The record gives the reactivity of an RNA of 177 nucleotides to DMS and 2A3. Values cover nucleotides 27 to 126.
RNA sequence: GGGAACGACUCGAGUAGAGUCGAAAAUGACUGCCUCUUUCGGUCUGCUAGAAGGAGUGAAAGGACGGCAGGCUAUUGGGUUGGUCCUUUGGAUGAAUUUAAAGAGGUCAGUGGGGAUUUGAAUGAAGUGAAGAAUUAUUUUCGAAUAAUUCUUCACAAAAGAAACAACAACAACAAC
Reactivity to DMS in 0.01 (KOAc 150mM, MgCl2 10mM, bicine 150mM(pH8.5), 24C), signal-to-noise 6, nucleotides 027 to 126: u000g010a060c000u000g010c010c000u000c000u000u000u000c090g010g010u000c010u000g000c110u010a130g020a150a180g010g010a070g020u010g010a040a050a060g000g010a100c170g010g010c010a010g000g010c030u000a060u000u010g000g010g010u000u000g010g010u000c010c030u000u000u010g010g010a070u000g000a070a060u000u000u010a060a080a090g010a090g000g010u010c080a050g010u000g000g000g000g000a140u000u010u000g010a100a120u010g000a130a130
Reactivity to 2A3 in 0.01 (KOAc 150mM, MgCl2 10mM, bicine 150mM(pH8.5), 24C), signal-to-noise 3, nucleotides 027 to 126: u060g030a000c000u000g000c000c000u040c000u020u040u040c030g040g050u000c030u040g030c040u080a080g060a190a070g120g100a120g150u080g120a130a040a020g060g050a010c050g000g000c000a000g000g000c020u080a120u130u140g040g000g040u080u090g070g000u000c020c000u080u100u110g070g010a060u060g060a050a120u110u160u150a100a090a010g030a010g000g010u100c040a000g030u080g010g000g000g040a030u090u070u210g100a100a060u100g040a170a030